The record gives the reactivity of an RNA of 177 nucleotides to DMS and 2A3.
The RNA was probed in 150 mM KOAc, 10 mM MgCl2 and 150 mM bicine (pH 8.5) at 24 C.
2A3 adducts were read by reverse transcription with SuperScript II with manganese.
It was measured as part of the RMDB libraries RFM100 and RFMREP.

[RMDB]
RNA sequence: GGGAACGACUCGAGUAGAGUCGAAAAUGUAUGCAUGUGCAUUCAUGAAGGGUAGAGACAUGAUGAAUGUUCUCACCUGAGUUAGAACCAAACCCAGCGCAGGCAGCUGCCCUGAGCUUUGUUAUUAUCUGUGCAUAUACUUCGGUAUAUGCACAGAAAAAGAAACAACAACAACAAC
Reactivity to DMS in 0.01 (KOAc 150mM, MgCl2 10mM, bicine 150mM(pH8.5), 24C), signal-to-noise 6, nucleotides 027 to 126: u000g010u000a010u010g020c030a220u040g000u020g010c000a040u000u000c000a050u010g000a130a210g000g010g010u000a080g030a010g010a030c000a010u000g000a150u030g000a180a010u000g000u020u000c000u000c010a040c010c000u000g000a100g020u020u010a080g000a130a200c070c080a060a080a070c040c030c030a030g000c120g020c000a010g020g010c110a160g010c200u010g010c080c020c020u000g000a030g000c060u000u000u000g000u020u010a120u000u010a120
Reactivity to 2A3 in 0.01 (KOAc 150mM, MgCl2 10mM, bicine 150mM(pH8.5), 24C), signal-to-noise 6, nucleotides 027 to 126: u040g020u060a020u000g020c040a070u260g180u240g130c010a000u000u060c010a000u060g040a040a030g010g020g000u080a100g040a010g010a010c000a010u030g030a030u220g030a080a010u020g040u290u070c000u000c000a000c000c000u000g000a010g000u060u110a090g040a060a000c050c000a050a020a100c030c000c020a010g010c020g000c020a000g030g000c030a090g100c120u160g010c030c020c000u010g010a020g000c000u080u080u090g070u040u050a110u080u080a070